[RMDB]
RNA sequence: GGGAACGACUCGAGUAGAGUCGAAAACGCAUGGUUUGGAGAGAGUGGUGCAAUGUCUGUGGCAUAAAAGAUGUUGUUCUACAAGGCUUAAAAGCUUGUUGUUACGUGGGUGUGCAAACUGUUGAAGAGGCCUAAUAGUUCGCUAUUAGGAAAAGAAACAACAACAACAAC
Reactivity to DMS in 0.01 (KOAc 150mM, MgCl2 10mM, bicine 150mM(pH8.5), 24C), signal-to-noise 7, nucleotides 027 to 129: c060g000c130a080u040g000g000u010u000u000g000g040a190g000a150g040a060g020u000g010g030u030g000c000a030a000u030g000u040c070u000g040u000g000g000c040a020u000a030a090a090a080g000a090u020g020u010u000g000u010u010c060u010a110c180a060a040g020g040c050u000u070a030a040a040a040g030c030u000u030g030u040u030g000u050u030a040c070g050u030g040g000g000u030g030u000g040c000a070a050a080c130u040g030u000u000g000a050a070g030a100g010g000
Reactivity to 2A3 in 0.01 (KOAc 150mM, MgCl2 10mM, bicine 150mM(pH8.5), 24C), signal-to-noise 6, nucleotides 027 to 129: c080g050c040a110u130g070g060u080u070u060g060g010a080g000a010g000a010g050u030g020g060u030g020c030a000a000u030g030u080c090u070g020u030g000g030c030a000u080a050a120a030a010g030a050u010g010u000u000g000u020u010c010u010a090c030a100a020g060g000c000u070u160a100a060a030a030g010c020u020u020g040u020u040g030u020u050a020c080g020u070g000g030g010u040g000u010g010c000a010a100a070c060u040g010u040u000g030a090a060g030a040g100g000